[RMDB]
RNA sequence: GGGAACGACUCGAGUAGAGUCGAAAAAUCUUACAACAGGCUAAUAAGUCUGUUGGUAUUAUAUCUAUGCCUUUGGGAUAUGUGUCUCAUGGUUUAGACUUAAUGCAAGCAGGGAGUGUCGUGCGUAUAGGACUUUACUUCGGUAAAGUCAAAAGAAACAACAACAACAAC
Reactivity to 2A3 in 0.01 (KOAc 150mM, MgCl2 10mM, bicine 150mM(pH8.5), 24C), signal-to-noise 9, nucleotides 027 to 129: a000u020c010u010u060a010c000a000a000c000a000g000g000c010u030a120a060u190a300a040g020u000c000u000g010u000u010g000g000u000a040u040u060a030u010a020u000c000u000a010u010g020c000c010u080u090u080g020g000g010a010u080a090u300g300u220g040u050c000u000c000a020u010g000g010u000u000u000a000g000a010c020u020u040a020a000u030g020c040a030a020g010c010a030g040g050g020a080g020u060g020u040c050g010u050g030c000g020u060a100u060a120g150
Reactivity to DMS in 0.01 (KOAc 150mM, MgCl2 10mM, bicine 150mM(pH8.5), 24C), signal-to-noise 7, nucleotides 027 to 129: a060u020c030u000u000a140c030a000a000c030a000g000g000c000u000a130a110u070a140a070g040u020c000u000g020u020u020g010g020u040a000u030u030a040u000a110u000c020u010a000u030g000c040c000u020u020u020g000g000g000a000u030a070u020g050u080g030u010c020u000c000a060u020g000g000u000u000u010a030g020a050c070u000u000a000a040u000g030c070a090a070g000c040a040g030g020g010a080g020u020g000u000c040g020u000g030c110g040u010a120u030a090g000